[RMDB]
RNA sequence: GGGAACGACUCGAGUAGAGUCGAAAAGAUUAAGUGGGAGCGUCGCCCUAUCGGUGCAUCGGAUAUUAAUUAGCCAGUGCGUGGCAGUACGCAUAUUGAUGUCUACUUUGGCGUAGACUCUGCCAAUUUAAGGAUUGAUGGGCAAUCCAGCCCUAGAGAGUAAUCAUAUCUUCGGAUAUGAUUACUCAAAAGAAACAACAACAACAAC
Reactivity to DMS in 0.01 (KOAc 150mM, MgCl2 10mM, bicine 150mM(pH8.5), 24C), signal-to-noise 3, nucleotides 027 to 156: g010a150u000u010a030a080g010u010g020g000g000a100g010c050g020u000c050g000c030c000c040u010a070u000c040g020g020u000g040c010a050u000c010g030g010a070u000a060u000u000a060a140u010u000a100g020c010c050a090g040u010g020c030g000u000g000g000c060a070g010u000a050c040g020c000a090u000a090u010u010g040a100u000g020u000c030u000a050c020u000u010u000g020g020c110g000u010a080g030a080c040u000c020u000g020c020c010a030a110u010u010u010a060a110g010g000a130u000u010g010a110u000g010g010g020c020a080a120u000c070c050a160g010c010c000c010u000a090g000a300
Reactivity to 2A3 in 0.01 (KOAc 150mM, MgCl2 10mM, bicine 150mM(pH8.5), 24C), signal-to-noise 7, nucleotides 027 to 156: g060a020u130u170a090a030g070u080g020g030g000a030g010c020g020u030c030g040c010c000c020u150a230u300c030g010g000u030g000c000a050u030c030g040g010a020u020a040u150u160a200a040u100u050a030g040c010c020a030g030u020g040c020g000u030g040g000c050a020g020u120a020c020g010c050a010u040a130u080u140g070a070u120g000u000c000u020a020c020u090u140u180g080g000c050g000u000a010g000a020c010u000c010u050g010c010c010a050a060u100u160u140a100a040g000g010a020u020u050g020a030u060g010g010g000c000a000a010u020c010c020a020g000c000c000c000u030a040g030a000
Chemical mapping of a 207-nucleotide RNA with DMS and 2A3.
High 2A3 reactivity points to a flexible backbone, as in loops and unpaired stretches.
2A3 adducts were read by reverse transcription with SuperScript II with manganese.
For DMS the reverse transcriptase was MarathonRT.
Values are in units of 0.01, from 0 to 300, in steps of 10.
It was measured as part of the RMDB library OK3TST.